Structure probing data (DMS and 2A3) for a 177-nucleotide construct. As a SHAPE reagent, 2A3 marks flexible, mostly unpaired nucleotides at the ribose 2'-OH. For DMS, 1,295 sequencing reads were counted. The 2A3 profile rests on 3,202 reads. The reactions ran in a buffer of 150 mM KOAc, 10 mM MgCl2 and 150 mM bicine (pH 8.5), at 24 C.
[RMDB]
RNA sequence: GGGAACGACUCGAGUAGAGUCGAAAAGAUAUGGACGAUUCAUGGGAGAGUGCAUUGUCGGAAACGACAAUGCUCGAGGAUCAUGAUCGUCCUAAGUCAAACUUUACCCCGUUCGCGGGGUAAAGAACCCUUCACCAAUGUUCGCAUUGGUGAAGGGAAAAGAAACAACAACAACAAC
Reactivity to DMS in 0.01 (KOAc 150mM, MgCl2 10mM, bicine 150mM(pH8.5), 24C), signal-to-noise 1, nucleotides 027 to 126: g000a000u000a140u000g020g000a010c000g030a050u000u010c030a020u000g000g010g000a260g000a250g010u000g040c000a000u000u000g000u010c030g030g000a010a030a050c020g000a020c000a000a030u000g000c010u000c010g000a210g000g000a190u010c020a030u000g000a050u000c020g010u010c000c000u000a000a050g000u000c000a150a110a260c010u000u000u000a030c000c010c020c000g000u010u010c290g030c010g030g000g010g010u000a000a010a000g020a110a150
Reactivity to 2A3 in 0.01 (KOAc 150mM, MgCl2 10mM, bicine 150mM(pH8.5), 24C), signal-to-noise 2, nucleotides 027 to 126: g020a010u020a000u020g000g010a000c010g050a070u230u150c180a020u030g060g020g030a300g140a130g170u010g000c000a000u030u010g000u020c000g010g000a020a010a000c000g000a010c010a000a010u010g000c000u000c000g050a070g210g160a190u060c010a000u000g010a020u010c000g030u000c000c000u000a000a000g000u030c000a000a010a030c010u000u000u010a020c000c040c040c010g000u020u050c180g000c010g150g000g000g000u000a000a000a000g000a000a020